The record gives the reactivity of an RNA of 170 nucleotides to DMS and 2A3. Reactivities are given for positions 27 through 129. For 2A3 the reverse transcriptase was SuperScript II with manganese. The reactions ran in a buffer of 150 mM KOAc, 10 mM MgCl2 and 150 mM bicine (pH 8.5), at 24 C.

RNA sequence: GGGAACGACUCGAGUAGAGUCGAAAAUUUAUGGUACUGCUACUAUUGGUGUAUGUAAGUACACUGAUAUUGAUGUUAAUUCAGCUUUGAAUAUAUGUUUUGACAUACGCGAUAAUUGUUCAUUGGAAAGGGGGAGAGUUCGCUCUCCCCAAAAGAAACAACAACAACAAC
Reactivity to DMS in 0.01 (KOAc 150mM, MgCl2 10mM, bicine 150mM(pH8.5), 24C), signal-to-noise 3, nucleotides 027 to 129: u010u000u000a050u000g050g040u000a020c040u020g020c020u030a170c140u020a020u000u000g010g060u040g020u040a000u050g030u150a100a150g000u010a010c030a090c000u120g010a030u030a040u000u000g000a130u020g030u020u010a000a000u070u030c050a020g020c090u030u000u010g040a170a000u000a040u010a070u010g000u050u000u040u000g020a060c000a230u010a020c040g040c020g010a020u080a100a100u080u000g060u000u190c040a160u130u000g040g000a030a060a100g020
Reactivity to 2A3 in 0.01 (KOAc 150mM, MgCl2 10mM, bicine 150mM(pH8.5), 24C), signal-to-noise 4, nucleotides 027 to 129: u040u020u010a070u040g150g000u070a020c040u080g010c000u010a040c000u000a040u040u010g010g010u000g030u000a000u020g240u140a130a130g040u000a020c000a000c000u000g000a000u000a020u050u090g100a090u030g030u170u130a130a040u080u050c030a000g000c010u040u170u190g050a120a000u020a000u020a010u160g040u020u010u010u010g010a020c000a030u050a060c000g000c000g100a040u000a060a080u140u060g010u030u000c030a040u100u110g120g070a150a010a060g170